[RMDB]
RNA sequence: GGGAACGACUCGAGUAGAGUCGAAAAACAGCAUGUACGCAUGCUGAAUAUUUGUACCAGAUGCUCCUUUUUCUGUAUUGUCAGAAAGAGCAUCCUGUGCAAAAGAAGCGCUGCUACGGCAGCGCAACUUAAAGCUCAAGUUCGCUUGAGCUUUAAGAAAAGAAACAACAACAACAAC
Reactivity to 2A3 in 0.01 (KOAc 150mM, MgCl2 10mM, bicine 150mM(pH8.5), 24C), signal-to-noise 9, nucleotides 027 to 126: a000c000a000g000c010a000u010g030u090a020c260g010c120a000u000g000c000u010g010a040a030u160a090u040u020u000g000u000a010c030c030a020g000a000u000g000c010u030c030c080u060u140u040u070u020c020u010g070u100a300u300u220g160u280c000a000g000a010a010a000g000a000g000c000a000u000c000c010u010g000u000g000c000a000a000a010a040g140a100a050g000c010g000c000u000g000c000u020a060c250g110g000c000a000g000c000g000c000a000a000
Reactivity to DMS in 0.01 (KOAc 150mM, MgCl2 10mM, bicine 150mM(pH8.5), 24C), signal-to-noise 6, nucleotides 027 to 126: a110c010a000g000c000a010u000g000u010a100c270g030c010a010u000g010c000u000g010a070a080u020a090u000u000u000g010u000a000c030c180a050g000a020u000g000c010u030c020c240u010u020u020u000u000c000u000g010u030a150u020u010g010u010c020a000g010a010a060a070g000a010g000c000a000u000c010c040u010g010u000g000c010a010a010a060a100g010a160a120g010c010g010c000u000g020c000u000a100c210g020g010c000a010g000c000g010c010a000a010
Structure probing data (2A3 and DMS) for a 177-nucleotide construct. Source: RMDB libraries RFM100 and RFMREP, as collected in RNAgym. The RNA was probed in 150 mM KOAc, 10 mM MgCl2 and 150 mM bicine (pH 8.5) at 24 C. For DMS the reverse transcriptase was MarathonRT.